[RMDB]
RNA sequence: GGGAACGACUCGAGUAGAGUCGAAAAUACCGCAGGCCUGCGGUGCGGCAGUGUGGAGACCUGCCGUAAGCCGUGUUGUUUUGACAACCGGGAGAAAGCGUAUUCGGAGGCAGCGCUUUCAGGGUCUAAAAGUAUGGGAUCUUCGGAUCCCAUACAAUCACAAUAUCCCCUUCGGGGGAUAUUGUGAAAAAGAAACAACAACAACAAC
Reactivity to 2A3 in 0.01 (KOAc 150mM, MgCl2 10mM, bicine 150mM(pH8.5), 24C), signal-to-noise 2, nucleotides 027 to 156: u090a000c000c000g000c010a010g000g020c000c000u010g000c000g000g000u000g000c000g000g010c000a010g000u040g000u070g230g080a040g030a110c020c000u010g000c120c000g000u000a000a000g000c000c010g120u120g000u110u000g030u020u100u110u300g120a020c000a000a000c000c000g000g000g000a010g010a010a000a000g000c000g000u050a210u100u250c120g050g000a010g000g050c000a000g000c000g000c000u000u000u000c010a010g000g000g020u000c000u000a030a110a030a000g010u000a000u000g000g000g000a000u000c000u030u040c200g100g000a000u020c010c000c000a000u000a000c000a000a000